[RMDB]
RNA sequence: GGGAACGACUCGAGUAGAGUCGAAAAAAAAGCCAAGAGUUGCACAAAUGGCUUUAUUGUGCGUCUCCAGAAAUUGUCUUUCGGACAAAGUCUAUCAUUAAAUCGCUCUAAGAUUCGGUAGACAGUACAGCACUUCAAUGUUCGCAUUGAAGUGCUGAAAAGAAACAACAACAACAAC
Reactivity to DMS in 0.01 (KOAc 150mM, MgCl2 10mM, bicine 150mM(pH8.5), 24C), signal-to-noise 1, nucleotides 027 to 126: a110a000a010a180g010c030c030a070a000g000a300g000u020u000g030c050a300c020a000a090a030u030g030g000c070u000u010u020a070u000u010g040u000g000c060g000u000c020u010c000c090a150g000a040a140a050u030u000g030u000c010u010u000u000c130g020g020a010c020a020a030a150g000u000c000u000a000u010c000a130u000u000a030a040a080u000c050g020c260u000c100u000a130a120g000a020u010u000c250g000g000u000a000g030a020c020a060g010u000a140
The record gives the reactivity of an RNA of 177 nucleotides to DMS. Reactivities are given for positions 27 through 126. For DMS, 680 sequencing reads were counted. Source: RMDB library OK2TRN, as collected in RNAgym.